[RMDB]
Notes
This 177-nucleotide RNA was probed chemically with DMS and 2A3. Values cover nucleotides 27 to 126. For 2A3 the reverse transcriptase was SuperScript II with manganese. Values are in units of 0.01, from 0 to 300, in steps of 10. The RNA was probed in 150 mM KOAc, 10 mM MgCl2 and 150 mM bicine (pH 8.5) at 24 C.
RNA sequence: GGGAACGACUCGAGUAGAGUCGAAAAACACACUGAUCCACCGCGGUUGCCGAUCUCGGGGGAGAUGCGCCACUCCGGAGUUGGGGGCAAGCCGCCUCUGAGCGCCCACGUGGGCUAGACGACGAGAGGCUCCGUUCGCGUUCGCGCGAGUGGAGCCAAAAGAAACAACAACAACAAC
Reactivity to DMS in 0.01 (KOAc 150mM, MgCl2 10mM, bicine 150mM(pH8.5), 24C), signal-to-noise 4, nucleotides 027 to 126: a090c090a110c090a080c060u010g000a090u010c040c010a050c080c050g010c030g000g020u010u010g010c040c030g000a060u010c020u000c010g000g000g000g020g000a050g000a080u010g010c070g000c040c040a080c030u020c060c030g000g010a050g000u010u020g000g040g000g010g000c040a050a090g010c040c100g000c030c010u010c000u000g020a080g000c090g000c010c010c040a140c170g010u010g000g000g000c020u010a040g000a150c020g010a110c090g020a100g000a230
Reactivity to 2A3 in 0.01 (KOAc 150mM, MgCl2 10mM, bicine 150mM(pH8.5), 24C), signal-to-noise 7, nucleotides 027 to 126: a000c080a010c010a010c050u070g030a080u030c020c010a030c050c000g020c020g010g010u060u080g060c040c020g050a090u040c020u020c030g040g010g010g030g010a090g020a050u120g020c020g020c020c020a100c020u020c020c010g070g030a090g040u150u100g070g010g000g000g000c020a050a020g090c030c020g010c020c000u020c000u020g050a040g010c030g040c000c010c000a100c060g040u200g020g000g000c010u030a040g020a050c070g000a000c020g040a020g010a050